[RMDB]
Annotation:
Structure probing data (2A3 and DMS) for a 207-nucleotide construct. The reactions ran in a buffer of 150 mM KOAc, 10 mM MgCl2 and 150 mM bicine (pH 8.5), at 24 C.
RNA sequence: GGGAACGACUCGAGUAGAGUCGAAAACGCUGGGCCAGGGAUACUGCUGUUAGGGAGCUGAAGCGCGCACGGCGAAGAACUAACGGCAGUACCUGGCCUGUGCUGAAGCGCGCACGGCAACCGAAAGGUGCGAAAGACGCUUGUUCGCAAGCGUCAAGUGAUAUCACUACUUCGGUAGUGAUAUCACAAAAGAAACAACAACAACAAC
Reactivity to 2A3 in 0.01 (KOAc 150mM, MgCl2 10mM, bicine 150mM(pH8.5), 24C), signal-to-noise 3, nucleotides 027 to 156: c040g000c020u070g000g000g020c010c000a000g030g000g040a150u120a200c000u010g020c000u000g010u000u000a020g000g020g000a020g010c020u030g040a260a030g030c000g000c010g000c020a040c020g000g000c020g080a170a010g020a030a000c010u000a010a000c010g000g010c000a000g010u000a010c010c000u030g000g030c010c000u000g000u000g000c010u000g000a120a010g000c000g000c000g020c000a010c020g040g000c040a040a060c010c010g070a100a040a030g010g000u040g020c050g070a150a050a100g010a010c020g000c000u010u010g040u050u180c300g020c100a000a000g010c010g000u000c000a010a010
Reactivity to DMS in 0.01 (KOAc 150mM, MgCl2 10mM, bicine 150mM(pH8.5), 24C), signal-to-noise 1, nucleotides 027 to 156: c060g090c010u000g000g070g060c000c010a070g020g020g000a300u010a110c010u010g000c000u030g010u000u010a070g000g000g000a070g020c020u010g000a000a110g040c010g010c000g020c020a300c030g000g000c010g020a050a180g000a100a240c000u000a000a020c000g060g000c000a010g030u000a020c010c010u000g000g000c000c000u000g000u000g030c000u030g000a230a090g040c000g030c000g000c000a150c010g030g000c030a100a240c020c000g000a090a160a170g010g050u000g030c010g010a050a140a290g010a010c000g000c010u000u000g010u010u010c300g070c000a010a010g000c000g020u000c000a010a220

Record summary
Reactivities are given for positions 27 through 156. DMS adducts were read by reverse transcription with MarathonRT.